[RMDB]
RNA sequence: GGGAACGACUCGAGUAGAGUCGAAAAGAUAUGGAUGUAGUGUAGACAUGGCAGGCCCGGUCGGAAACGACCGGACUGCCAACAGCUACCUACAUCCUAAGUCAAAAGGUGCCGUUCGCGGCACCAACAUAAGCUAUAUCUUCGGAUAUAGCUUAUGAAAAGAAACAACAACAACAAC
Reactivity to 2A3 in 0.01 (KOAc 150mM, MgCl2 10mM, bicine 150mM(pH8.5), 24C), signal-to-noise 4, nucleotides 027 to 126: g030a010u080a050u180g000g000a000u000g010u010a000g020u030g010u300a010g040a070c100a220u200g000g000c010a010g010g040c060c000c010g010g000u000c000g020g030a070a080a050c020g020a010c000c020g010g000a000c000u000g010c000c010a000a000c010a010g000c000u000a000c000c000u000a000c010a000u000c000c000u010a000a000g020u000c030a000a000a070a300g010g000u020g000c010c000g030u070u090c300g020c040g150g020c000a000c000c000a000a000
Reactivity to DMS in 0.01 (KOAc 150mM, MgCl2 10mM, bicine 150mM(pH8.5), 24C), signal-to-noise 6, nucleotides 027 to 126: g000a030u000a300u000g000g000a020u000g010u000a000g010u010g020u000a000g000a050c110a270u010g000g030c000a020g010g000c250c000c010g010g020u000c000g010g000a090a110a230c000g010a000c000c010g010g010a040c000u000g010c010c000a010a010c230a170g000c010u000a010c000c000u000a000c000a010u000c000c000u000a010a060g020u010c050a130a080a160a160g010g030u000g020c010c010g020u000u020c240g020c020g000g000c010a000c010c000a050a080
Chemical mapping of a 177-nucleotide RNA with 2A3 and DMS.
2A3 adducts were read by reverse transcription with SuperScript II with manganese.
The RNA was probed in 150 mM KOAc, 10 mM MgCl2 and 150 mM bicine (pH 8.5) at 24 C.